Structure probing data (2A3 and DMS) for a 177-nucleotide construct. DMS adducts were read by reverse transcription with MarathonRT. Source: RMDB library OK1LIB, as collected in RNAgym. Values cover nucleotides 27 to 126. The DMS profile rests on 1,110 reads. The RNA was probed in 150 mM KOAc, 10 mM MgCl2 and 150 mM bicine (pH 8.5) at 24 C. Reactivities are rounded to 0.1 and cut off at 0 and 3. The 2A3 profile rests on 1,316 reads.
RNA sequence: GGGAACGACUCGAGUAGAGUCGAAAACACAAAAAGCUGAUGCUGCCGGAGCGGUCAUCCGUAAGUAUUUCAGGAGUAAAUUCGACAUUAUUCAGAAAGACGACCUCGGUCCAGUAAACAAACAAAAAGCACGAUAUUACUUCGGUAAUAUCGUGCUAAAAGAAACAACAACAACAAC
Reactivity to 2A3 in 0.01 (KOAc 150mM, MgCl2 10mM, bicine 150mM(pH8.5), 24C), signal-to-noise 2, nucleotides 027 to 126: c040a010c050a010a120a000a000a050g140c020u020g000a040u040g010c000u010g040c040c010g080g000a010g060c070g000g060u030c000a120u060c020c000g010u050a080a040g050u000a080u050u070u050c010a010g000g090a030g090u040a020a000a060u120u040c000g020a000c020a050u000u090a060u090u150c030a010g130a030a100a060g030a040c020g020a030c000c000u010c020g040g000u000c000c040a000g040u060a010a250a000c080a030a110a000c030a020a150a020a010
Reactivity to DMS in 0.01 (KOAc 150mM, MgCl2 10mM, bicine 150mM(pH8.5), 24C), signal-to-noise 1, nucleotides 027 to 126: c020a180c080a000a200a230a110a160g020c000u020g030a000u000g010c000u000g000c010c080g000g060a040g000c040g080g000u000c090a290u000c050c070g000u000a090a130g000u000a000u000u070u000c090a020g000g000a090g000u000a050a010a160u070u010c010g000a030c020a060u010u000a090u000u000c030a040g000a050a140a050g000a000c030g110a220c190c000u000c000g000g030u030c050c120a040g000u080a090a080a020c200a100a000a080c190a110a120a000a050